[RMDB]
RNA sequence: GGGAACGACUCGAGUAGAGUCGAAAAGGGUGCAUGAGGUCCCAGCUACUUGGGAGGCUCAGAUGGGAGGAUGACUUGAGCCUGGGCUCUCAAGGCUGCAGUAAGCUGUGACUGUGCCACAGCGCUCCGGACAUACUCAAUUCGUUGAGUAUGUCCGAAAAGAAACAACAACAACAAC
Reactivity to DMS in 0.01 (KOAc 150mM, MgCl2 10mM, bicine 150mM(pH8.5), 24C), signal-to-noise 6, nucleotides 027 to 126: g010g010g010u000g010c050a090u010g000a140g010g010u000c020c030c010a050g000c050u010a100c060u000u000g010g010g000a040g010g010c010u000c010a030g010a080u000g000g010g000a060g010g000a150u020g020a180c030u010u000g010a270g000c090c000u000g010g000g000c030u000c020u000c030a040a040g010g010c080u000g010c100a080g000u010a090a080g010c000u000g010u000g000a050c030u010g010u010g000c050c030a070c050a050g020c040g010c050u000c030
Reactivity to 2A3 in 0.01 (KOAc 150mM, MgCl2 10mM, bicine 150mM(pH8.5), 24C), signal-to-noise 5, nucleotides 027 to 126: g030g030g010u070g020c040a070u170g300a060g080g050u010c010c020c020a010g000c010u120a110c010u020u010g010g010g010a030g220g050c000u000c020a010g020a050u100g100g130g020a040g070g010a100u200g030a060c030u030u040g020a020g010c000c010u010g010g000g000c010u020c000u010c020a020a020g040g000c040u130g010c020a070g040u090a090a020g000c010u000g020u020g020a030c020u080g050u120g070c040c010a040c030a020g030c030g000c020u020c030
Chemical mapping of a 177-nucleotide RNA with DMS and 2A3. For 2A3 the reverse transcriptase was SuperScript II with manganese. Values are in units of 0.01, from 0 to 300, in steps of 10. It was measured as part of the RMDB library OK2TRN.